[RMDB]
RNA sequence: GGGAACGACUCGAGUAGAGUCGAAAAAAAAGAUAUGGACUAGCGGGAGCUACUUUGCCGAUGAAAGCUAUCGGAAACGAUAGCUGGAGGCAAAGAAUAGCGAAGAACGCUAGUCCUAAGUCAAAAAUCCUACAUACUUGUUCGCAAGUAUGUAGGAAAAAGAAACAACAACAACAAC
Reactivity to DMS in 0.01 (KOAc 150mM, MgCl2 10mM, bicine 150mM(pH8.5), 24C), signal-to-noise 3, nucleotides 027 to 126: a080a070a090a140g010a050u000a300u010g020g010a010c000u000a000g000c000g000g020g010a220g010c000u000a030c010u020u000u000g010c010c020g000a090u020g000a120a100a020g000c000u000a000u000c000g040g000a130a060a150c010g030a010u000a000g010c000u000g030g000a020g000g000c000a010a010a010g000a110a110u000a000g000c000g010a160a110g010a140a130c010g010c000u000a000g000u000c000c000u000a010a080g010u040c020a040a050a140a130a070

The record gives the reactivity of an RNA of 177 nucleotides to DMS. The RNA was probed in 150 mM KOAc, 10 mM MgCl2 and 150 mM bicine (pH 8.5) at 24 C.